The record gives the reactivity of an RNA of 207 nucleotides to DMS. For DMS, 1,589 sequencing reads were counted.

[RMDB]
RNA sequence: GGGAACGACUCGAGUAGAGUCGAAAAUCAAUCGCAUUGUUGGGUGAAAGUUGGAGGAUAAAUCCUCACCAAGAUUUAAAUUAAGCAAGAGAUAUAAGGUCGCUCCUUAUAUUGCGACUUGCUUAAAGAUAUCCGGCAAAGUUCGCUUUGCCGGAAACUUAAUUCAACACUUCGGUGUUGAAUUAAGAAAAGAAACAACAACAACAAC
Reactivity to DMS in 0.01 (KOAc 150mM, MgCl2 10mM, bicine 150mM(pH8.5), 24C), signal-to-noise 1, nucleotides 027 to 156: u010c070a080a250u010c110g040c080a140u000u010g040u020u000g010g040g040u010g020a050a110a140g000u010u000g020g010a140g010g000a200u010a070a140a160u000c010c000u030c010a120c040c010a050a100g010a130u000u000u000a060a130a160u000u000a000a040g000c020a020a040g000a300g020a010u040a040u000a010a010g000g020u010c270g010c300u010c010c000u000u000a030u000a060u010u010g000c010g000a110c010u000u000g010c000u000u000a000a050a120g030a180u000a070u010c000c010g020g000c000a030a040a020g000u000u000c300g000c030u000u030u000g040c000c010g010g000a000a000a010
The RNA was probed in 150 mM KOAc, 10 mM MgCl2 and 150 mM bicine (pH 8.5) at 24 C. For DMS the reverse transcriptase was MarathonRT. It was measured as part of the RMDB library M2RFPK.